[RMDB]
RNA sequence: GGGAACGACUCGAGUAGAGUCGAAAAAGGUAAGACAAGGAUUGUGUUGGAAAGAGUGACAGUGAGCCAAGAGCUAAAAUUAUUUGUGGAAUGAAGAAAUGAUUGGACUGGUAGAUGCCUGCACCAUGGAGGGUUAGUGGUUACUCUAGCCUGAUAACUAUACGGAAAAUUUCGAUUUUCCGUAUAGAAAAGAAACAACAACAACAAC
Reactivity to 2A3 in 0.01 (KOAc 150mM, MgCl2 10mM, bicine 150mM(pH8.5), 24C), signal-to-noise 6, nucleotides 027 to 156: a010g080g010u060a040a020g030a020c040a020a030g020g010a030u100u200g050u010g010u050u050g020g020a050a060a040g040a030g010u020g030a020c020a040g060u030g060a010g030c010c020a060a020g040a010g030c040u110a080a060a070a070u190u070a110u060u100u080g040u050g030g060a070a090u090g020a050a080g040a050a130a040u120g030a070u050u050g020g020a020c050u030g020g010u020a050g010a100u090g030c010c010u030g020c020a020c030c010a040u070g040g030a030g020g030g000u010u020a020g010u030g070g070u050u070a060c030u010c000u020a020g030c020c020u050g020a010u070a060a010
Reactivity to DMS in 0.01 (KOAc 150mM, MgCl2 10mM, bicine 150mM(pH8.5), 24C), signal-to-noise 3, nucleotides 027 to 156: a080g020g020u000a060a060g020a090c040a030a040g000g020a080u000u000g050u000g000u000u000g030g000a050a070a080g020a110g030u000g000a100c100a090g020u000g000a120g030c050c050a060a100g010a110g010c030u000a040a040a080a110u010u000a100u000u000u000g030u010g030g000a060a100u000g020a060a070g010a080a070a100u000g010a130u000u010g020g010a030c040u010g030g000u000a070g010a100u000g000c030c030u000g020c080a060c010c040a050u010g010g010a190g030g020g020u000u000a060g020u000g010g020u000u000a060c060u000c030u010a050g010c020c000u000g000a080u000a050a160
This 207-nucleotide RNA was probed chemically with 2A3 and DMS.
Source: RMDB library OK3TST, as collected in RNAgym.
2A3 is a SHAPE reagent: it acylates the 2'-hydroxyl of flexible nucleotides of all four kinds.
The reactions ran in a buffer of 150 mM KOAc, 10 mM MgCl2 and 150 mM bicine (pH 8.5), at 24 C.
Reactivities are given for positions 27 through 156.